[RMDB]
RNA sequence: GGGAACGACUCGAGUAGAGUCGAAAACUCAUACAACAAGCUGCAGUGUCUGCAGCGGCAUGCGUUGUCUGGCCUGAAUAACCUGCGCGUGCUUUCGCUGCACGGUAACCGCAUCUCGAUGCUGCCGUGUUACACCGCACUUCGGUGCGGUGUAACAAAAAGAAACAACAACAACAAC
Reactivity to 2A3 in 0.01 (KOAc 150mM, MgCl2 10mM, bicine 150mM(pH8.5), 24C), signal-to-noise 1, nucleotides 027 to 126: c000u010c010a030u080a190c090a110a000c010a010a110g050c060u010g000c020a000g000u030g050u080c020u010g000c020a010g000c010g060g000c000a010u020g000c030g120u110u080g180u210c110u160g040g040c040c040u120g080a190a120u150a070a030c000c060u000g000c000g030c010g000u020g020c000u060u090u030c050g010c040u060g040c000a010c020g020g080u060a060a110c040c000g040c060a090u030c120u130c100g030a000u010g020c000u020g070c000c010g000
Reactivity to DMS in 0.01 (KOAc 150mM, MgCl2 10mM, bicine 150mM(pH8.5), 24C), signal-to-noise 2, nucleotides 027 to 126: c050u000c010a100u020a090c150a050a120c060a060a090g020c050u000g010c020a050g010u000g000u000c090u000g010c010a010g020c010g000g020c030a020u000g000c020g000u020u020g000u000c150u000g010g010c060c030u000g000a090a050u000a040a260c050c040u000g010c010g100c010g000u000g000c020u000u020u020c110g030c020u000g000c000a070c070g000g030u000a030a030c070c120g010c080a030u000c090u000c070g010a130u000g000c100u010g000c020c070g010